[RMDB]
RNA sequence: GGGAACGACUCGAGUAGAGUCGAAAAUGCAUCAAUAUAUUUUCACUGACAAAGAUGGGGAACAGAUGUACCAACAGGUGCUGUGAAUCCAAAUUUUGUUUUGCUUGUUAAAUAUGCCACAGGUAUUUAAUAUCAGUCAUUUGCAACGGCAAAAACAGGAAAAUAUUACUUUCGAGUAAUAUUUUCCAAAAGAAACAACAACAACAAC
Reactivity to DMS in 0.01 (KOAc 150mM, MgCl2 10mM, bicine 150mM(pH8.5), 24C), signal-to-noise 1, nucleotides 027 to 156: u000g030c040a060u000c030a100a060u000a120u000a040u010u000u010u000c040a160c060u000g000a300c050a100a130a120g000a170u040g050g020g040g000a050a240c030a130g020a100u010g020u000a100c010c040a050a170c080a110g020g020u010g020c010u000g040u020g010a110a300u000c010c010a060a060a210u000u000u010u030g000u000u020u000u000g000c020u000u010g000u000u000a000a000a090u000a010u010g040c000c220a120c050a080g030g030u000a010u010u000u010a040a080u000a040u010c020a050g000u020c030a040u010u010u000g000c030a020a040c020g000g000c020a020a020a030a040a100c050a120
Reactivity to 2A3 in 0.01 (KOAc 150mM, MgCl2 10mM, bicine 150mM(pH8.5), 24C), signal-to-noise 2, nucleotides 027 to 156: u100g000c000a010u050c040a080a050u100a020u020a110u210u090u080u140c060a040c020u120g020a050c030a040a050a140g050a110u080g000g000g040g040a040a000c040a020g130a070u150g030u140a030c010c000a020a130c030a130g010g000u020g000c000u020g000u020g020a030a010u030c000c020a090a130a000u070u140u140u080g050u010u070u040u000g020c040u120u070g010u050u020a030a070a100u150a020u030g050c010c070a070c050a060g050g000u010a040u110u150u090a170a070u090a060u080c040a050g150u020c010a040u070u070u060g000c010a030a020c050g080g000c000a060a000a000a000a030c030a040